[RMDB]
RNA sequence: GGGAACGACUCGAGUAGAGUCGAAAAAAGCCUUUAAAAGUCAAUAAUAUUGAUAACAACGAUAAUGGUAUUUACUCUCAUAUUAAAUUUCUUACUGCUAGGGCUGACACAGGAGAAACACUAAACAGCUUGAAUCAUUAUUCGUAAUGAUUCAAGCAAAAGAAACAACAACAACAAC
Reactivity to 2A3 in 0.01 (KOAc 150mM, MgCl2 10mM, bicine 150mM(pH8.5), 24C), signal-to-noise 2, nucleotides 027 to 126: a000a000g140c110c000u090u180u000a140a220a020a000g040u000c000a010a010u150a130a180u120a120u070u080g020a040u070a170a060c030a070a020c060g010a020u060a170a030u050g010g070u020a150u040u030u080a060c020u000c000u010c040a000u160a200u290u240a040a080a260u110u130u030c080u040u090a300c020u020g000c020u030a050g000g030g000c010u000g020a020c000a000c010a040g060g010a090g010a010a050a020c040a000c120u080a110a160a000c060a040
Reactivity to DMS in 0.01 (KOAc 150mM, MgCl2 10mM, bicine 150mM(pH8.5), 24C), signal-to-noise 1, nucleotides 027 to 126: a130a290g060c000c000u020u000u000a080a080a290a180g000u000c000a000a020u020a030a080u000a300u020u010g000a000u000a050a080c170a180a140c030g000a090u020a110a020u000g020g000u000a030u000u000u030a050c150u000c050u000c000a080u010a210u000u000a000a040a110u020u000u000c020u000u020a080c050u000g000c080u000a030g000g000g000c020u000g030a030c070a030c070a010g030g060a020g000a010a020a130c150a050c140u020a030a050a170c210a080